[RMDB]
RNA sequence: GGGAACGACUCGAGUAGAGUCGAAAACAAAACCUCCCGGCAAAGGGCGCGGGAGUCCGUGUACGUAAUUGCUUUAUUCCACGCAAGGGCUUUACGUUUGUCGGCGCUGACCUCGGUCAGAUCGAGCCGCGCAUCAUGGCCCACAUCAUGUACACAACUGAUCUGACAAGUUCGCUUGUCAGAUCAGAAAAGAAACAACAACAACAAC
Reactivity to 2A3 in 0.01 (KOAc 150mM, MgCl2 10mM, bicine 150mM(pH8.5), 24C), signal-to-noise 3, nucleotides 027 to 156: c030a010a080a000a020c010c000u020c010c000c000g000g000c090a200a190a210g200g130g000c220g000c000g070g000g000a010g000u030c030c080g000u010g000u000a020c000g030u020a030a140u070u030g000c000u030u170u270a110u250u120c090c060a090c090g000c020a020a080g000g000g000c000u070u060u060a050c090g070u050u070u040g060u100c000g000g020c010g010c000u010g010a000c000c040u070c210g020g010u010c010a000g010a040u180c080g050a050g010c010c000g050c040g000c020a000u050c010a030u050g020g020c010c050c010a020c000a030u120c020a030u080g010u020a000c000a000c000a020a080

This 207-nucleotide RNA was probed chemically with 2A3. Values cover nucleotides 27 to 156. It was measured as part of the RMDB library OK3TST.